[RMDB]
RNA sequence: GGGAACGACUCGAGUAGAGUCGAAAAGAUAUGGAGCGGUAGCUAGCAACAGCUAAAGUCGGAAACGACUUUAGACAUGCUAACUACCCGCUCCUAAGUCAAAGUCUUGGCGUUCGCGCCAAGACAAGUUCUAUCAGACGUUCGCGUCUGAUAGAACAAAAGAAACAACAACAACAAC
Reactivity to 2A3 in 0.01 (KOAc 150mM, MgCl2 10mM, bicine 150mM(pH8.5), 24C), signal-to-noise 1, nucleotides 027 to 126: g040a030u110a040u200g000g010a000g000c010g000g030u010a000g010c000u000a020g010c020a050a200c080a180g020c000u000a010a000a000g010u000c000g010g000a050a060a060c000g000a000c000u030u010u010a000g000a020c020a030u080g000c010u000a010a000c010u000a020c050c000c000g000c010u000c000c000u010a090a000g020u000c070a110a120a100g000u020c000u000u000g000g000c000g050u080u110c300g010c030g000c170c000a000a000g010a000c000a000a010
Reactivity to DMS in 0.01 (KOAc 150mM, MgCl2 10mM, bicine 150mM(pH8.5), 24C), signal-to-noise 2, nucleotides 027 to 126: g000a070u010a300u000g010g010a040g070c010g010g010u000a010g020c030u000a000g010c000a040a110c300a150g020c000u000a000a010a000g020u000c000g020g000a150a080a290c010g000a030c000u000u000u000a000g000a010c110a200u000g010c000u000a000a000c000u000a000c090c030c030g010c020u000c000c020u000a010a060g010u030c040a120a210a130g010u000c000u010u030g000g040c000g060u000u010c300g000c010g010c000c000a000a030g000a000c000a060a050